[RMDB]
RNA sequence: GGGAACGACUCGAGUAGAGUCGAAAAGAUAUGGAAUGUGACACGAGAAUAACUCGCUAAUAAGUUAUAUUCGGAAACGAAUAUAACUUAUUAGCGAGUUGAUUCGAUGAGUGUACAUUCCUAAGUCCAGGUUAAUUGUGUUCGCACAAUUAACCUGAAAAGAAACAACAACAACAAC
Reactivity to DMS in 0.01 (KOAc 150mM, MgCl2 10mM, bicine 150mM(pH8.5), 24C), signal-to-noise 2, nucleotides 027 to 126: g020a120u010a300u010g010g010a030a010u000g010u020g000a020c000a000c000g000a260g000a010a000u000a040a010c000u000c000g010c000u020a010a000u000a000a020g000u010u000a000u000a000u000u000c010g020g010a130a070a240c010g000a020a000u000a010u000a000a010c000u020u000a000u000u000a000g010c000g000a000g000u010u000g000a000u000u000c000g010a160u020g000a230g010u000g030u000a030c000a010u000u000c000c000u000a050a100g000u000c030